[RMDB]
RNA sequence: GGGAACGACUCGAGUAGAGUCGAAAAGCAACUGUGGCAAGCGAUCCGGGCCGGAAGACGUGCACAGAAACGGCGCGCUGGCCGCACUGGCCCAGCCGGCCAUCCUCAGCUAACACUAGGCCGAGCAUCCAUCAGGUAAUUUCGAUUACCUGAUGGAAAAAGAAACAACAACAACAAC
Reactivity to DMS in 0.01 (KOAc 150mM, MgCl2 10mM, bicine 150mM(pH8.5), 24C), signal-to-noise 6, nucleotides 027 to 126: g010c050a080a080c120u000g020u010g010g010c020a060a040g010c030g000a070u010c050c050g000g020g010c020c010g000g000a090a090g010a140c050g010u000g000c040a100c190a090g010a100a130a130c080g000g000c060g020c080g010c040u000g000g010c010c010g020c070a040c100u000g010g010c020c020c050a080g010c020c020g000g000c000c010a100u000c080c060u010c090a080g000c050u010a050a090c120a090c070u000a100g010g020c020c010g000a150g020c120a170
Reactivity to 2A3 in 0.01 (KOAc 150mM, MgCl2 10mM, bicine 150mM(pH8.5), 24C), signal-to-noise 5, nucleotides 027 to 126: g050c020a000a060c020u040g000u040g040g000c040a030a010g020c010g010a010u010c020c040g040g060g020c020c010g050g050a120a050g160a110c040g100u150g060c040a060c030a220g140a080a160a000c030g010g010c010g000c010g020c050u010g030g000c010c000g000c010a040c040u070g030g010c000c020c000a000g020c000c000g020g000c010c010a070u050c010c030u080c050a050g000c030u090a090a030c020a030c130u080a050g010g000c000c010g000a040g000c000a050
Source information:
An RNA of 177 nucleotides, treated with DMS and 2A3 and read out base by base. The 2A3 profile rests on 8,867 reads.